[RMDB]
RNA sequence: GGGAACGACUCGAGUAGAGUCGAAAAUGAAUAGCAGGAUAUCGUGCUGCAGCCAUGAGGAGCGACCUAUCGUGGGGCGUACGUGCCGUCUCUGCAACGAGGGGUGUUGGCCGACCGCCCCAAUAUGCAGCAAAUACUGGUUCGCCAGUAUUUGCUGAAAAGAAACAACAACAACAAC
Reactivity to DMS in 0.01 (KOAc 150mM, MgCl2 10mM, bicine 150mM(pH8.5), 24C), signal-to-noise 3, nucleotides 027 to 126: u010g000a100a040u020a070g070c040a040g000g020a100u020a060u000c060g000u030g000c020u020g010c050a040g030c080c020a100u040g000a100g010g010a120g010c040g020a070c030c040u000a060u020c070g030u000g040g010g000g000c010g000u010a110c050g020u040g020c020c000g000u030c010u000c000u000g030c190a070a130c260g000a070g000g000g000g000u040g030u020u030g020g000c010c010g020a120c210c030g000c010c000c000c010a000a000u020a020u050g020
Reactivity to 2A3 in 0.01 (KOAc 150mM, MgCl2 10mM, bicine 150mM(pH8.5), 24C), signal-to-noise 4, nucleotides 027 to 126: u150g060a030a010u080a130g040c030a010g030g040a020u060a070u180c090g010u050g130c030u040g040c000a010g050c020c020a050u140g040a040g090g020a040g030c020g060a110c010c020u080a050u150c050g030u110g000g000g000g000c020g000u000a040c050g060u190g010c000c010g070u040c040u000c000u020g070c060a100a030c060g040a030g000g010g010g040u090g030u180u260g070g010c000c020g000a030c030c000g020c010c000c000c000a010a010u050a010u060g030